[RMDB]
Annotation:
The record gives the reactivity of an RNA of 177 nucleotides to 2A3 and DMS. The data come from the RNA Mapping Database (RMDB), library OK2TST. Reactivities are given for positions 27 through 126. DMS (dimethyl sulfate) methylates the pairing face of unpaired adenines and cytosines. Conditions: 150 mM KOAc, 10 mM MgCl2 and 150 mM bicine (pH 8.5), 24 C.
RNA sequence: GGGAACGACUCGAGUAGAGUCGAAAAGUUUCGCCGCCGCGUCGGUGCUGAUCUCCUCCGCGCUGGCGUCGCGGAACAACCCUGGGCCGCAUGGUCUUUCGGAGAUUCUAUACGCCUACACGUCGGGUCUAAAUGAAUGCUUCGGCAUUCAUUUAGAAAAAGAAACAACAACAACAAC
Reactivity to 2A3 in 0.01 (KOAc 150mM, MgCl2 10mM, bicine 150mM(pH8.5), 24C), signal-to-noise 2, nucleotides 027 to 126: g000u000u020u050c070g000c060c000g000c000c010g030c000g050u180c060g030g000u030g010c100u120g060a140u020c100u020c070c010u040c000c010g000c000g000c080u140g010g040c000g000u040c020g000c010g010g010a010a020c010a010a010c000c010c010u010g010g010g010c060c030g090c130a120u130g000g000u000c000u040u070u060c090g070g010a040g000a020u090u020c030u090a100u030a130c050g000c030c010u020a040c080a000c070g130u080c100g100g010g000
Reactivity to DMS in 0.01 (KOAc 150mM, MgCl2 10mM, bicine 150mM(pH8.5), 24C), signal-to-noise 3, nucleotides 027 to 126: g000u000u010u000c000g020c000c020g000c020c040g000c000g020u010c050g000g000u000g020c140u030g010a080u000c110u000c120c050u000c010c010g000c000g010c020u010g040g010c030g030u010c210g030c000g010g000a010a040c030a030a080c030c010c020u010g010g000g010c050c010g020c170a050u010g010g010u000c030u000u000u010c120g010g000a100g000a050u000u000c050u000a100u000a100c120g000c030c010u000a070c130a090c090g010u000c050g000g010g000